[RMDB]
An RNA of 177 nucleotides, treated with DMS and 2A3 and read out base by base.
For DMS the reverse transcriptase was MarathonRT.
The RNA was probed in 150 mM KOAc, 10 mM MgCl2 and 150 mM bicine (pH 8.5) at 24 C.
Source: RMDB library OK2TRN, as collected in RNAgym.
RNA sequence: GGGAACGACUCGAGUAGAGUCGAAAAUGUCCACCAGUUUGCUGUAGCUGCGGUUGGGGUCAUUACGCAUCAGAUACGCCGCUUCCGCAAAAAUGGUACGUCCUGAUCCCUGCCAGAACGGGUCCUCUCCGUUCCUGUAUUUCGAUACAGGAACGGAAAAAGAAACAACAACAACAAC
Reactivity to DMS in 0.01 (KOAc 150mM, MgCl2 10mM, bicine 150mM(pH8.5), 24C), signal-to-noise 3, nucleotides 027 to 126: u010g010u000c050c040a150c070c020a060g000u010u000u000g020c020u010g010u020a040g000c070u010g010c100g010g000u010u000g010g010g020g000u000c020a050u010u000a070c180g020c060a050u010c060a070g010a110u020a150c110g010c000c100g000c070u000u000c050c070g010c060a020a030a070a050a060u010g010g000u000a040c070g000u030c030c030u000g010a070u010c010c030c010u010g030c040c020a090g020a040a050c090g000g010g010u000c030c040u010c130
Reactivity to 2A3 in 0.01 (KOAc 150mM, MgCl2 10mM, bicine 150mM(pH8.5), 24C), signal-to-noise 2, nucleotides 027 to 126: u070g060u020c000c010a020c020c020a050g030u050u080u080g030c010u060g030u170a060g020c030u040g010c040g040g050u020u030g000g060g000g020u030c000a060u010u250a030c080g000c030a040u030c030a040g060a090u080a190c050g010c020c000g000c040u050u060c040c010g010c010a000a050a010a080a060u060g020g000u040a010c010g010u020c010c010u030g000a020u020c020c000c020u030g050c020c010a030g040a070a020c030g030g000g040u040c010c020u050c010